[RMDB]
RNA sequence: GGGAACGACUCGAGUAGAGUCGAAAAUGAAAUAAAGUGUACCAAAUGGUAGGUACACACCAAGUGUGCGGUGGUCGCACACAACCAGCAGUCAAUAGAGACUGCAAAACCUAACGAAAGAAAAAAACAUAGGAAUGCGAUUCGUCGCAUUCCUAUGAAAAGAAACAACAACAACAAC
Reactivity to 2A3 in 0.01 (KOAc 150mM, MgCl2 10mM, bicine 150mM(pH8.5), 24C), signal-to-noise 2, nucleotides 027 to 126: u060g010a000a040a050u240a050a140a060g000u000g000u010a000c000c000a000a080a160u270g120g090u130a070g000g000u000a000c000a000c000a000c020c000a120a020g000u000g000u000g010c000g010g070u150g070g210u260c000g000c000a000c000a000c000a000a050c030c020a020g000c000a010g000u010c000a010a050u030a280g140a010g010a090c000u000g010c010a000a070a000a000c010c010u040a060a020c070g150a160a030a090g090a050a160a000a000a010a000a000
Reactivity to DMS in 0.01 (KOAc 150mM, MgCl2 10mM, bicine 150mM(pH8.5), 24C), signal-to-noise 1, nucleotides 027 to 126: u000g030a030a140a040u000a040a050a070g040u030g000u000a000c010c000a150a200a200u000g000g000u000a130g010g000u000a020c000a000c000a080c110c120a050a100g000u010g010u000g000c000g010g020u020g010g010u000c020g060c020a000c050a000c000a170a120c160c120a080g000c000a000g010u010c000a080a040u000a150g000a010g010a020c000u010g000c000a030a020a050a030c050c110u010a090a060c160g000a070a050a070g010a030a000a030a040a100a070a100